[RMDB]
RNA sequence: GGGAACGACUCGAGUAGAGUCGAAAAGUGUGUGUGUGUAUAUGCUUGUCAGUGCAUGCACGUGUAUGUCUGGGAGUACAAAUGGGUGCGACUGGUUGUAGGGAACUAGCUAUGUGCCUUCUAUUAGGAUUUGUUCAGAGUUCGCUCUGAACAAAUCAAAAGAAACAACAACAACAAC
Reactivity to 2A3 in 0.01 (KOAc 150mM, MgCl2 10mM, bicine 150mM(pH8.5), 24C), signal-to-noise 2, nucleotides 027 to 126: g090u080g000u010g000u000g000u000g000u000g040u080a010u030a090u170g010c030u100u170g100u230c030a000g030u000g060c000a000u010g010c000a000c030g000u030g000u010a060u040g080u030c050u080g040g020g040a100g000u100a070c040a050a140a080u120g040g020g010u020g040c020g020a030c040u030g030g040u050u070g000u020a050g020g050g000a020a010c010u000a010g040c020u060a060u150g030u030g010c010c000u070u050c040u030a200u140u080a070g130
Reactivity to DMS in 0.01 (KOAc 150mM, MgCl2 10mM, bicine 150mM(pH8.5), 24C), signal-to-noise 2, nucleotides 027 to 126: g010u010g000u010g010u010g020u000g020u000g010u000a030u000a120u000g010c070u010u000g020u000c010a050g010u000g000c000a030u000g000c000a010c030g050u020g030u000a040u000g010u000c040u010g010g010g010a100g020u010a060c110a050a090a110u000g010g010g020u000g020c020g010a070c040u000g010g000u000u010g010u000a090g020g010g000a050a030c090u000a020g020c040u000a080u010g020u000g000c020c030u000u000c100u010a140u000u000a120g020